[RMDB]
RNA sequence: GGGAACGACUCGAGUAGAGUCGAAAACACUCUAAGCAACCUGAUAGCCAACAAACUCAUAACAAUGAACUGUGCUACAGAAGAUUUUAGAUCAGAAGUGUCUAGACUUAAACAGACACUUACAUCAAGGAAUGUACUUCAUGGACUGGCUGGAGGACGACACCUAAACGUUCGCGUUUAGGUGUCGAAAAGAAACAACAACAACAAC
Reactivity to 2A3 in 0.01 (KOAc 150mM, MgCl2 10mM, bicine 150mM(pH8.5), 24C), signal-to-noise 2, nucleotides 027 to 156: c020a000c040u020c050u110a090a030g000c010a010a100c010c000u060g000a200u050a060g010c020c010a040a060c020a050a210a030c020u090c000a030u090a200a110c170a290a200u050g030a070a030c060u050g070u140g080c000u030a000c030a040g090a040a010g000a040u100u110u060u200a040g010a020u080c090a030g050a190a000g000u000g000u000c000u040a020g060a240c080u150u210a070a160a090c020a000g010a000c000a000c000u010u010a020c060a070u060c040a000a060g030g010a130a020u040g050u060a120c060u060u070c030a030u060g030g060a040c060u030g010g000c000u000g040g010a000g000g060a000
This 207-nucleotide RNA was probed chemically with 2A3. For 2A3 the reverse transcriptase was SuperScript II with manganese. It was measured as part of the RMDB library OK3TST. High 2A3 reactivity points to a flexible backbone, as in loops and unpaired stretches. The RNA was probed in 150 mM KOAc, 10 mM MgCl2 and 150 mM bicine (pH 8.5) at 24 C.